[RMDB]
RNA sequence: GGGAACGACUCGAGUAGAGUCGAAAAUGAUGCACAUGCCAAGACACCUGAAGAAUUUCGUCUAGUAAUAGCCGAUGCACCGAAAUCAACGCUAACUACCAUCCACUCACAUUUAUGGUCACUAUUUAACCAAUAUCGUGAGGCCAUUGAACGUCCACGCAAUUUGCCUAUUCGUAGGCAAAUUGCGAAAAGAAACAACAACAACAAC
Reactivity to 2A3 in 0.01 (KOAc 150mM, MgCl2 10mM, bicine 150mM(pH8.5), 24C), signal-to-noise 1, nucleotides 027 to 156: u140g050a010u100g070c160a040c060a020u140g040c050c060a080a000g050a010c070a010c050c020u070g140a140a070g030a050a080u000u150u040c030g020u030c070u000a010g020u070a030a140u030a120g000c030c000g010a030u030g020c070a050c070c010g040a070a070a000u090c010a080a090c030g040c130u070a010a050c010u030a120c000c000a040u010c000c040a050c020u030c030a030c000a030u080u120u060a140u030g010g010u030c030a030c080u140a030u140u120u010a030a010c000c010a050a000u050a050u070c000g010u010g040a080g030g000c000c000a000u000u010g050a010a000c020g000u000c040c020a020
Description: Conditions: 150 mM KOAc, 10 mM MgCl2 and 150 mM bicine (pH 8.5), 24 C. An RNA of 207 nucleotides, treated with 2A3 and read out base by base.